[RMDB]
RNA sequence: GGGAACGACUCGAGUAGAGUCGAAAAUGGGGCUCAGAGAGGUUGAGAAACUUGUUAAGGACUUACAGCUAACAGGUGGAGAAGCUCUUUCAGGUUCUGGUCUGUUUUACUCAGAAGGACAUACUGAUGUCUGUAAUGCCAACAUGUCCAGUCCUUAUAGUGAGUACUGGUUCGCCAGUACUCACUAAAAAGAAACAACAACAACAAC
Reactivity to DMS in 0.01 (KOAc 150mM, MgCl2 10mM, bicine 150mM(pH8.5), 24C), signal-to-noise 1, nucleotides 027 to 156: u000g000g020g030g000c030u050c030a060g000a040g010a130g070g010u000u000g000a110g000a140a060a070c010u010u000g000u000u020a090a070g000g030a140c030u010u020a070c100a100g020c060u000a160a070c060a060g080g030u010g010g010a160g000a100a010g010c020u010c000u000u010u000c070a080g000g020u000u000c070u000g000g110u000c040u010g010u000u010u000u010a160c060u010c050a140g010a210a240g010g000a010c040a040u000a160c140u030g020a050u000g020u000c020u000g040u000a070a100u000g010c060c020a020a040c030a050u000g000u000c010c000a160g030u010c010c010u000u000a230
Reactivity to 2A3 in 0.01 (KOAc 150mM, MgCl2 10mM, bicine 150mM(pH8.5), 24C), signal-to-noise 1, nucleotides 027 to 156: u080g000g000g000g000c040u000c070a010g050a010g000a030g070g010u060u080g010a040g050a070a100a000c040u070u050g040u130u110a030a070g000g000a050c000u030u130a060c080a040g030c010u010a020a020c010a050g000g010u030g000g070a080g020a060a000g020c000u040c000u040u100u090c020a070g000g000u100u050c000u050g000g030u000c010u010g040u040u070u070u070a080c090u080c050a070g010a020a020g050g000a000c000a020u080a040c110u220g170a020u050g030u000c000u020g070u100a000a080u130g030c000c000a000a010c000a040u150g000u000c000c000a010g010u020c000c000u040u160a070